This 177-nucleotide RNA was probed chemically with DMS and 2A3. Values cover nucleotides 27 to 126.

RNA sequence: GGGAACGACUCGAGUAGAGUCGAAAAUGCGCGCGAUCGUGGCUGCUCUCCGCAGCUGGUCGGCUAUGCCACUGACCGUUGAGAAGUCAGCUCGGGUUCGUUGUCGCAGCCCGUCGCCCCCGGCGCCGGAGUAGUUGUCAUUCGUGACAACUACUCCAAAAGAAACAACAACAACAAC
Reactivity to DMS in 0.01 (KOAc 150mM, MgCl2 10mM, bicine 150mM(pH8.5), 24C), signal-to-noise 3, nucleotides 027 to 126: u010g010c040g020c040g000c010g010a010u010c040g020u010g000g000c000u000g000c090u000c040u000c040c070g010c050a020g010c030u000g020g000u000c060g030g000c060u020a070u010g010c060c080a130c060u000g010a040c010c020g030u000u000g000a080g010a070a040g010u000c030a030g000c020u000c050g010g010g010u010u010c050g000u000u010g020u010c060g010c030a060g000c010c000c020g010u010c090g000c030c010c040c060c060g000g000c090g020c120c160
Reactivity to 2A3 in 0.01 (KOAc 150mM, MgCl2 10mM, bicine 150mM(pH8.5), 24C), signal-to-noise 3, nucleotides 027 to 126: u030g000c030g010c000g000c000g010a020u060c080g140u150g030g000c000u010g010c010u010c000u000c040c020g040c040a010g020c020u070g010g010u050c030g020g000c040u080a140u300g080c000c030a040c030u050g050a100c050c000g070u050u050g050a070g030a130a040g070u150c010a010g020c030u050c020g110g000g010u090u060c040g060u110u280g150u110c040g010c010a010g030c010c000c000g020u020c030g020c020c000c010c010c030g000g020c050g000c000c060
The RNA was probed in 150 mM KOAc, 10 mM MgCl2 and 150 mM bicine (pH 8.5) at 24 C. For 2A3, 3,820 sequencing reads were counted.